[RMDB]
RNA sequence: GGGAACGACUCGAGUAGAGUCGAAAAGAACUUUGGCCGGCUGGGAAUAGAAUCAGGGGGUGCAAACUGCCCACUGGCAGAAAGGAUUAUAGCAAAUGCGUACCCUAUUGCAAUACAGCCCGGCCAACAUAGACUACUCUAUUCGUAGAGUAGUCAAUAUAUAUUAUGGAUUCGUCCAUAAUAUAUAAAAAGAAACAACAACAACAAC
Reactivity to 2A3 in 0.01 (KOAc 150mM, MgCl2 10mM, bicine 150mM(pH8.5), 24C), signal-to-noise 2, nucleotides 027 to 156: g000a050a010c010u120u040u040g000g000c000c000g030g040c000u000g020g040g050a090a090u120a200g040a040a030u240c100a100g000g000g000g040g000u100g010c020a040a100a130c020u030g000c000c010c050a170c240u120g020g010c010a020g040a010a040a000g130g060a040u110u200a080u300a160g060c030a040a120a070u050g000c020g040u070a090c000c000c000u030a100u050u100g080c030a040a060u070a170c000a020g060c020c010c000g000g000c010c000a000a000c000a010u050a010g000a000c000u000a000c020u000c000u010a060u080u030c100g090u050a010g000a000g000u000a000g000u010c000a000a000
Reactivity to DMS in 0.01 (KOAc 150mM, MgCl2 10mM, bicine 150mM(pH8.5), 24C), signal-to-noise 2, nucleotides 027 to 156: g000a120a090c030u000u000u000g000g010c000c030g000g040c030u000g000g020g010a150a140u010a080g000a070a090u010c050a090g030g020g040g060g010u010g030c020a060a040a090c090u000g000c020c000c150a100c170u010g020g040c060a050g000a270a100a140g000g040a160u000u000a140u020a240g000c060a060a090a100u000g020c050g000u000a100c010c000c000u000a120u000u000g010c060a070a170u010a090c010a050g000c100c030c000g040g000c000c010a020a000c050a090u000a160g000a020c000u000a010c010u000c000u000a060u000u000c180g010u000a050g000a010g030u000a040g000u000c000a000a030
Chemical mapping of a 207-nucleotide RNA with 2A3 and DMS. Values cover nucleotides 27 to 156. The 2A3 profile rests on 1,401 reads. Conditions: 150 mM KOAc, 10 mM MgCl2 and 150 mM bicine (pH 8.5), 24 C. For DMS the reverse transcriptase was MarathonRT.